[RMDB]
Notes
Structure probing data (DMS) for a 177-nucleotide construct. Source: RMDB library TTRINS, as collected in RNAgym. The DMS profile rests on 1,258 reads. For DMS the reverse transcriptase was MarathonRT.
RNA sequence: GGGAACGACUCGAGUAGAGUCGAAAAGAUAUGGAAUGAUGUAGACAUGCUCUGUCGUACUGUAUUAGGAUCGGAAACGAUCCUAAUACAGUACGACUAGAGCAACAGCUACCUCAUUCCUAAGUCACAUUCAGGUAGACUUCGGUCUACCUGAAUGAAAAGAAACAACAACAACAAC
Reactivity to DMS in 0.01 (KOAc 150mM, MgCl2 10mM, bicine 150mM(pH8.5), 24C), signal-to-noise 1, nucleotides 027 to 126: g010a050u000a300u010g000g000a000a010u000g010a010u000g000u000a060g000a080c150a230u000g000c000u000c000u000g030u000c000g000u000a000c000u000g000u000a020u010u010a010g000g020a000u000c030g020g000a200a090a180c010g010a000u050c000c000u000a000a000u000a000c000a010g020u000a000c000g000a010c010u000a000g000a020g010c050a010a010c240a130g030c020u010a000c000c040u000c000a000u000u000c000c010u010a000a050g000u000c020a300